[RMDB]
RNA sequence: GGGAACGACUCGAGUAGAGUCGAAAAAUACUUUUGAGGGUACCUACGAUCCUGAUGAUAAAGCACAAAAGCACAUUGCGGAUAUGAAGUAUAAAACAGGAGAUGGCCGAAAGGUUUGGCACUUAAUUGUGUCAGCAGAUGGCAAAAAGCAAUGGCAACCUAAUCGUAUAUUCGUAUACGAUUAGGUAAAAGAAACAACAACAACAAC
Reactivity to DMS in 0.01 (KOAc 150mM, MgCl2 10mM, bicine 150mM(pH8.5), 24C), signal-to-noise 2, nucleotides 027 to 156: a080u000a050c050u010u000u020u000g000a110g010g000g000u000a100c160c020u000a060c150g020a030u010c000c020u000g010a120u000g020a080u010a060a060a060g020c040a150c080a060a090a070a200g030c060a100c070a130u000u000g040c110g000g000a080u000a040u000g010a090a050g010u000a130u010a010a030a020a050c020a020g040g010a050g020a040u010g010g040c000c040g000a010a040a110g000g010u000u000u010g010g030c020a020c000u000u000a050a190u000u000g040u010g040u000c040a060g010c020a130g000a050u000g010g020c030a000a020a020a050a030g010c050a040a090u010g010g000c060a120
Reactivity to 2A3 in 0.01 (KOAc 150mM, MgCl2 10mM, bicine 150mM(pH8.5), 24C), signal-to-noise 3, nucleotides 027 to 156: a000u130a030c070u070u100u010u130g090a070g040g020g030u070a040c010c000u010a040c130g020a000u000c000c010u030g010a020u060g020a030u090a230a100a000g020c090a100c030a150a070a070a080g050c020a070c010a110u110u300g010c060g010g020a020u040a030u200g080a050a020g020u020a010u020a130a000a010a000c000a010g010g030a180g010a060u030g020g000c010c020g030a010a020a030g020g020u010u080u050g020g000c010a000c000u010u030a040a050u250u050g010u010g000u010c010a010g000c030a020g020a100u080g050g000c000a000a000a000a000a000g020c020a020a020u050g080g030c020a020
Structure probing data (DMS and 2A3) for a 207-nucleotide construct. The RNA was probed in 150 mM KOAc, 10 mM MgCl2 and 150 mM bicine (pH 8.5) at 24 C. 2A3 adducts were read by reverse transcription with SuperScript II with manganese. The DMS profile rests on 4,532 reads.